[RMDB]
RNA sequence: GGGAACGACUCGAGUAGAGUCGAAAAGUGAACAAAGCUGUUGCUGAAGAUCUGGGAUUCUCAGAGGAGCAAGUUGCUGCAGUUAGGGAGAUUCUAAAAUCCGAGAACGCCAACAUGAGCAAUGGUCCACAGGGGCCAAAAGCAAAUCAAUCAUCCAAUCCACUCAUACAUUCGUGUAUGAGUGGAUAAAAGAAACAACAACAACAAC
Reactivity to 2A3 in 0.01 (KOAc 150mM, MgCl2 10mM, bicine 150mM(pH8.5), 24C), signal-to-noise 2, nucleotides 027 to 156: g060u030g070a080a040c020a070a040a010g030c040u020g020u060u030g020c010u010g020a100a020g030a040u050c020u070g000g050g070a190u180u020c070u000c040a000g050a030g040g050a030g020c090a070a040g040u020u040g020c020u070g000c060a050g010u010u090a050g000g020g000a090g010a040u040u050c010u070a050a060a070a120u040c040c000g010a020g000a100a030c010g000c020c000a040a020c020a130u050g030a000g020c020a030a020u090g000g000u030c020c010a100c150a190g110g030g020g040c000c050a000a080a000a000g020c010a040a090a000u070c000a000a030u030c000a030u020c000c030a010
Reactivity to DMS in 0.01 (KOAc 150mM, MgCl2 10mM, bicine 150mM(pH8.5), 24C), signal-to-noise 1, nucleotides 027 to 156: g040u000g030a090a090c100a100a190a160g030c010u000g070u000u000g000c010u010g010a140a130g000a060u000c040u000g000g080g000a140u000u000c010u010c010a100g040a170g000g000a070g070c010a070a100g000u010u000g000c030u000g000c090a130g000u000u000a040g010g010g070a200g000a090u000u000c030u010a110a050a140a140u010c030c020g030a120g000a100a030c010g030c010c050a010a070c060a100u000g020a140g010c020a140a240u010g010g040u000c010c030a110c130a160g000g030g040g040c000c000a000a000a040a150g010c050a070a070a100u000c050a040a110u000c030a070u000c020c020a140

Chemical mapping of a 207-nucleotide RNA with 2A3 and DMS. Conditions: 150 mM KOAc, 10 mM MgCl2 and 150 mM bicine (pH 8.5), 24 C. For DMS the reverse transcriptase was MarathonRT.